[RMDB]
RNA sequence: GGGAACGACUCGAGUAGAGUCGAAAAGACACGAGUUCCCGGAACAGACUCUCUCAACCGCCAAGUUUUGAAGGGACAAAUGUCCAAGUGCGCCUCAGCACAAAAGGCGGAACAAAACAAAAGCAAAGAUGAAAAAAAGAUUCGUCUUUUUUUCAUCAAAAGAAACAACAACAACAAC
Reactivity to 2A3 in 0.01 (KOAc 150mM, MgCl2 10mM, bicine 150mM(pH8.5), 24C), signal-to-noise 1, nucleotides 027 to 126: g040a000c030a020c110g050a040g040u060u010c020c010c000g000g090a080a060c070a020g040a060c000u000c000u030c010u040c070a040a080c040c000g000c010c010a050a140g010u020u060u120u190g060a070a020g080g000g000a000c000a000a300a110u300g000u000c000c000a060a050g010u030g010c000g000c040c080u140c140a010g030c010a000c000a060a070a000a010g000g000c000g000g010a020a010c010a020a060a040a000c000a010a210a020a030g030c000a040a010a140
Reactivity to DMS in 0.01 (KOAc 150mM, MgCl2 10mM, bicine 150mM(pH8.5), 24C), signal-to-noise 1, nucleotides 027 to 126: g010a180c070a040c150g000a250g000u020u000c000c010c040g000g000a100a040c080a080g000a110c030u010c020u000c040u010c080a180a120c090c030g010c000c020a100a100g010u000u020u010u020g050a130a200g020g000g000a020c020a100a080a100u000g000u000c000c030a080a100g000u000g010c050g010c050c060u000c050a080g000c060a030c050a050a030a120a070g000g020c020g000g000a100a080c070a020a090a030a020c030a020a020a120a060g000c090a030a040a070
An RNA of 177 nucleotides, treated with 2A3 and DMS and read out base by base. The 2A3 profile rests on 1,154 reads. The reactions ran in a buffer of 150 mM KOAc, 10 mM MgCl2 and 150 mM bicine (pH 8.5), at 24 C. For DMS, 708 sequencing reads were counted. For 2A3 the reverse transcriptase was SuperScript II with manganese. The data come from the RNA Mapping Database (RMDB), library M2PK90. Values cover nucleotides 27 to 126.